Description:
Chemical mapping of a 177-nucleotide RNA with DMS and 2A3.
[RMDB]
RNA sequence: GGGAACGACUCGAGUAGAGUCGAAAAGGGCCGGGUGCAUCCCUCGUGGUGCUACGAAUGCCUACAGCUGGAAUCUGCUGUAGAAGCCUACUGUAUGUCUCCUGACAUACAGUAGAUACCUGCAAGGGAGAGUUGAUCACUUCGGUGAUCAGCUUUCAAAAGAAACAACAACAACAAC
Reactivity to DMS in 0.01 (KOAc 150mM, MgCl2 10mM, bicine 150mM(pH8.5), 24C), signal-to-noise 9, nucleotides 027 to 126: g000g000g020c040c040g000g000g010u010g000c030a060u000c010c020c120u020c170g010u030g000g020u010g010c030u010a080c090g010a110a080u020g010c040c000u000a010c010a010g010c000u000g010g020a070a180u020c040u000g000c000u000g000u000a010g000a100a120g010c100c000u000a000c000u000g010u000a000u000g000u000c010u020c230c280u030g010a020c000a000u000a000c000a000g010u000a000g000a090u010a030c040c020u010g010c090a090a090g010g010
Reactivity to 2A3 in 0.01 (KOAc 150mM, MgCl2 10mM, bicine 150mM(pH8.5), 24C), signal-to-noise 9, nucleotides 027 to 126: g030g010g010c020c000g010g010g020u040g010c000a030u020c000c000c000u030c030g060u130g010g000u020g000c000u020a030c020g060a070a020u120g020c000c000u000a000c000a000g000c000u020g010g040a060a070u070c020u030g000c000u000g000u000a010g020a060a010g020c000c000u000a000c000u000g000u000a000u000g000u000c020u050c060c130u180g000a000c000a000u000a000c000a000g000u000a000g000a000u010a020c000c000u010g020c020a020a040g060g030
The RNA was probed in 150 mM KOAc, 10 mM MgCl2 and 150 mM bicine (pH 8.5) at 24 C.